[RMDB]
RNA sequence: GGGAACGACUCGAGUAGAGUCGAAAAGCUCCUUCAGGUGAACGAUCUCGGUUGUUUCUCUGAAGGCAUGAUCACCCCGUCCGAUGCGGAAGUUCGUGCUUCCGUCGAACGCGAAAGUCGGCCGGCGAAAACGAGUUACCGUUCGCGGUAACUCGAAGGAUACCCACUUCUUCGGAAGUGGGUAUCCAAAAGAAACAACAACAACAAC
Reactivity to 2A3 in 0.01 (KOAc 150mM, MgCl2 10mM, bicine 150mM(pH8.5), 24C), signal-to-noise 1, nucleotides 027 to 156: g000c020u020c000c000u000u000c000a000g040g050u130g050a010a020c000g000a010u000c000u160c300g140g000u040u030g000u070u050u030c000u000c010u010g000a010a020g010g000c010a110u050g040a020u030c010a150c000c000c000c000g000u000c020c000g010a040u070g010c010g000g020a000a000g000u150u250c150g190u300g010c020u010u000c000c000g050u000c000g030a110a010c120g000c050g300a130a110a000g060u020c000g010g000c000c000g010g000c040g110a120a090a000a000c000g000a000g000u000u000a000c000c000g020u010u120c200g000c010g090g000u000a010a000c000u000c000g000a000a060
An RNA of 207 nucleotides, treated with 2A3 and read out base by base.
The RNA was probed in 150 mM KOAc, 10 mM MgCl2 and 150 mM bicine (pH 8.5) at 24 C.
It was measured as part of the RMDB library M2RFPK.
Reactivities are given for positions 27 through 156.
For 2A3 the reverse transcriptase was SuperScript II with manganese.